Structure probing data (DMS and 2A3) for a 177-nucleotide construct. The 2A3 profile rests on 3,679 reads. For DMS, 1,500 sequencing reads were counted. Source: RMDB library TTRDEL, as collected in RNAgym. The RNA was probed in 150 mM KOAc, 10 mM MgCl2 and 150 mM bicine (pH 8.5) at 24 C.

RNA sequence: GGGAACGACUCGAGUAGAGUCGAAAAGAUAUGGAAUCCAGGAGCUUUUGACGCAUGGUCGGAAACGACUUUCGAUGCGAUAAGCUCUGGAUUCCUAAGUCAAAACUGGUCACUUCGGUGACCAGAACCUUCUUGAGUGGUUCGCCACUCAAGAAGGAAAAGAAACAACAACAACAAC
Reactivity to DMS in 0.01 (KOAc 150mM, MgCl2 10mM, bicine 150mM(pH8.5), 24C), signal-to-noise 2, nucleotides 027 to 126: g000a030u010a300u000g000g000a000a000u000c000c020a010g030g010a020g020c000u010u000u010u010g040a190c020g010c000a010u000g030g010u010c000g000g000a110a060a130c010g020a020c000u000u000u020c130g010a040u000g020c000g010a130u010a030a020g000c010u000c010u000g000g000a000u000u000c000c000u000a000a040g000u010c020a100a080a130a110c000u000g000g010u000c000a010c000u000u000c170g040g020u000g000a000c000c000a010g010a050a100
Reactivity to 2A3 in 0.01 (KOAc 150mM, MgCl2 10mM, bicine 150mM(pH8.5), 24C), signal-to-noise 3, nucleotides 027 to 126: g000a010u040a010u100g000g010a000a000u000c000c020a080g250g250a100g060c010u040u300u300u300g160a060c000g000c020a010u050g000g000u000c000g000g040a000a050a050c010g000a020c000u030u190u080c190g090a050u020g050c000g120a150u070a250a060g000c000u000c010u000g000g000a000u000u000c000c000u000a000a010g010u000c020a010a010a120a160c010u000g000g010u010c000a000c000u030u040c300g130g000u010g000a000c000c000a000g000a000a000